[RMDB]
RNA sequence: GGGAACGACUCGAGUAGAGUCGAAAAUCCUCCCGAUUCCGUCCAACCCCUUCCCCCGAGGGUCGCCCAGGAAUGGCGGGACCCACUCGACUGGGGUCCGCGUUCCAUCCUUUCUUACCUUGUGGCCAAACGGGCAACUUCGGUUGCCCGAAAAGAAACAACAACAACAAC
Reactivity to 2A3 in 0.01 (KOAc 150mM, MgCl2 10mM, bicine 150mM(pH8.5), 24C), signal-to-noise 3, nucleotides 027 to 129: u000c000c010u040c010c000c000g030a060u100u020c000c030g020u030c050c020a080a050c060c090c000c000u000u000c030c000c000c020c000g030a040g000g000g020u000c010g010c000c000c030a010g000g040a020a000u110g180g090c000g020g000g030a000c000c050c010a030c030u170c090g290a130c070u060g010g000g030g010u000c000c020g020c000g000u000u000c010c010a040u050c010c000u100u170u020c020u030u050a070c020c000u070u100g060u070g040g020c000c000a000a160a030
Reactivity to DMS in 0.01 (KOAc 150mM, MgCl2 10mM, bicine 150mM(pH8.5), 24C), signal-to-noise 2, nucleotides 027 to 129: u030c010c050u010c050c040c050g030a110u040u000c050c000g010u000c090c040a030a050c040c010c020c020u060u000c050c000c000c000c000g070a050g130g010g030u000c150g000c070c020c000a200g000g030a030a070u010g000g000c040g070g020g010a020c060c000c000a030c070u040c000g060a240c150u000g000g030g100g040u020c030c020g010c000g040u000u000c150c000a030u050c020c020u100u000u080c040u050u020a090c060c090u000u050g060u040g020g030c020c000a020a080a120